Record summary: Structure probing data (2A3 and DMS) for a 170-nucleotide construct. Conditions: 150 mM KOAc, 10 mM MgCl2 and 150 mM bicine (pH 8.5), 24 C. It was measured as part of the RMDB library 15KLIB.
RNA sequence: GGGAACGACUCGAGUAGAGUCGAAAAACAUCCCCAACCCGCGGGCCGGCUACUCUUCUUUCCCUUCUCUCGUCUUCCUCGGUCAACCUCCUGAGUUCCUCUUCUUCCUCCCUGCUGAGGUUCUUUCACAUCCUUGACUUCGGUCAAGGAAAAAGAAACAACAACAACAAC
Reactivity to 2A3 in 0.01 (KOAc 150mM, MgCl2 10mM, bicine 150mM(pH8.5), 24C), signal-to-noise 3, nucleotides 027 to 129: a000c030a110u080c020c000c000c000a010a050c020c020c010g030c030g040g000g000c010c010g030g020c000u030a040c040u040c010u100u000c020u020u060u050c000c000c000u060u030c010u000c000u000c010g060u020c020u120u040c010c010u020c010g010g030u060c010a040a060c000c010u030c000c010u040g020a040g040u040u030c000c000u050c000u050u010c000u060u020c000c000u020c010c000c000u040g010c050u030g030a040g040g000u020u010c000u010u050u040c060a100c020a090
Reactivity to DMS in 0.01 (KOAc 150mM, MgCl2 10mM, bicine 150mM(pH8.5), 24C), signal-to-noise 5, nucleotides 027 to 129: a180c190a050u000c000c030c000c090a080a110c010c010c000g000c050g030g000g030c030c020g030g040c050u020a000c040u000c000u000u000c000u010u000u000c000c000c000u000u000c000u030c030u000c080g000u010c050u000u000c030c020u020c060g000g000u000c000a070a140c040c000u000c000c020u030g000a080g010u010u000c000c000u030c060u020u030c020u010u040c030c020u000c010c010c010u000g040c050u000g000a130g000g030u000u000c090u000u000u000c060a070c230a160